[RMDB]
Conditions: 150 mM KOAc, 10 mM MgCl2 and 150 mM bicine (pH 8.5), 24 C. Chemical mapping of a 177-nucleotide RNA with DMS and 2A3. For 2A3, 3,843 sequencing reads were counted.

RNA sequence: GGGAACGACUCGAGUAGAGUCGAAAAGAUAUGGAGAUAUAUUGGCUCCAUACUACCCACCUCGGAAACGAGAGGUAUGAAGAGCAGGUAUCUCCUAAGUCAAAAUCCCCGAGUUCGCUCGGGGAAAGAAUUCUUAAUACUUCGGUAUUAAGAAUUCAAAAGAAACAACAACAACAAC
Reactivity to DMS in 0.01 (KOAc 150mM, MgCl2 10mM, bicine 150mM(pH8.5), 24C), signal-to-noise 3, nucleotides 027 to 126: g010a070u010a300u000g000g000a000g000a030u010a030u000a090u010u000g010g000c000u000c000c030a090u000a130c150u000a050c030c020c080a260c200c000u000c000g000g000a090a080a170c000g000a010g020a080g010g000u000a000u000g010a100a300g000a020g010c000a070g000g010u000a010u000c010u010c000c000u000a030a090g000u000c030a090a080a100a170u010c020c000c000c000g010a020g000u000u020c220g010c030u010c010g020g000g000g000a000a000a050
Reactivity to 2A3 in 0.01 (KOAc 150mM, MgCl2 10mM, bicine 150mM(pH8.5), 24C), signal-to-noise 2, nucleotides 027 to 126: g040a040u070a030u200g000g010a010g010a010u010a000u040a170u120u290g190g040c010u000c010c000a020u040a010c030u020a020c030c020c030a160c030c010u020c000g040g050a160a090a080c030g000a010g000a020g040g000u010a010u020g050a050a080g010a000g000c030a020g050g040u000a010u010c010u000c000c000u020a110a010g050u030c070a040a020a040a300u000c000c010c000c000g000a000g020u050u050c190g050c090u010c000g000g000g020g000a020a020a010